[RMDB]
RNA sequence: GGGAACGACUCGAGUAGAGUCGAAAAUAAACACCUCGAAUGAGGUGGAGAAUCGUGCAGAUAAGAGGCUCGACAGCUGCACGAAAAAGCGAGCCUACAAAGGUCGAGGAAAACUCGACCCCAAAAACGUCAUCGUCGUGUUCGCACGAUGAUGACGAAAAGAAACAACAACAACAAC
Reactivity to DMS in 0.01 (KOAc 150mM, MgCl2 10mM, bicine 150mM(pH8.5), 24C), signal-to-noise 2, nucleotides 027 to 126: u020a040a060a080c000a020c000c000u010c000g040a150a140u040g010a010g000g060u000g000g000a050g020a120a070u000c010g030u000g000c000a030g010a050u080a120a110g030a070g030g000c000u000c000g020a240c080a100g000c000u010g050c010a000c000g000a030a010a030a050a020g000c100g000a030g010c000c010u000a130c150a020a070a140g020g000u010c000g030a030g000g020a100a070a110a090c000u000c000g010a030c020c010c040c050a060a020a070a100a050
Reactivity to 2A3 in 0.01 (KOAc 150mM, MgCl2 10mM, bicine 150mM(pH8.5), 24C), signal-to-noise 3, nucleotides 027 to 126: u100a000a070a010c000a000c010c010u030c010g170a260a210u300g000a000g000g000u020g020g000a080g080a020a050u020c010g000u000g000c020a000g040a030u220a300a050g070a100g080g030c020u020c060g080a070c090a070g000c020u000g000c000a000c000g060a070a010a000a000a000g080c020g000a000g010c000c000u010a020c030a030a130a000g010g000u000c000g000a000g000g060a040a060a130a130c000u000c000g000a000c000c000c000c000a080a060a010a010a010
Description:
This 177-nucleotide RNA was probed chemically with DMS and 2A3. DMS adducts were read by reverse transcription with MarathonRT. For DMS, 1,810 sequencing reads were counted. For 2A3, 2,328 sequencing reads were counted. The data come from the RNA Mapping Database (RMDB), library OK1LIB. The RNA was probed in 150 mM KOAc, 10 mM MgCl2 and 150 mM bicine (pH 8.5) at 24 C.